[RMDB]
RNA sequence: GGGAACGACUCGAGUAGAGUCGAAAAGCUAGAGCGUUGUCGUAUUAGGCCGGAUAGGCUGCGAAGCGGUCGUGCGACGUCAGUUUGAUCCUGACCGGCCUAAGGAUCUUACUGGUGCUCUAGGAAAGGGUUGUUCGGGCUUCGGUCCGGAUAGCCCAAAAGAAACAACAACAACAAC
Reactivity to DMS in 0.01 (KOAc 150mM, MgCl2 10mM, bicine 150mM(pH8.5), 24C), signal-to-noise 9, nucleotides 027 to 126: g010c000u000a010g000a010g010c010g020u020u030g000u000c020g010u010a060u020u010a040g010g010c000c000g000g000a270u030a080g000g000c030u010g010c080g010a140a120g010c020g010g010u010c020g010u010g000c030g000a030c030g000u020c010a030g010u000u000u000g000a020u010c000c000u000g000a270c030c020g000g000c000c000u000a070a010g000g010a010u000c020u000u010a020c020u010g000g020u030g010c000u000c000u000a010g000g000a060a090a120
Reactivity to 2A3 in 0.01 (KOAc 150mM, MgCl2 10mM, bicine 150mM(pH8.5), 24C), signal-to-noise 9, nucleotides 027 to 126: g080c000u000a000g000a000g010c020g060u100u190g030u090c010g000u030a060u060u140a090g000g000c000c000g020g030a070u070a090g040g010c020u020g010c050g100a120a030g080c020g010g020u030c020g030u050g030c020g000a010c000g040u190c000a010g000u010u020u030g000a010u010c000c000u020g030a070c020c010g000g000c000c000u010a020a020g000g000a010u000c000u010u020a010c010u010g010g020u070g000c000u000c000u000a000g000g010a040a070a030

Chemical mapping of a 177-nucleotide RNA with DMS and 2A3. For 2A3, 103,085 sequencing reads were counted. Conditions: 150 mM KOAc, 10 mM MgCl2 and 150 mM bicine (pH 8.5), 24 C. 2A3 adducts were read by reverse transcription with SuperScript II with manganese.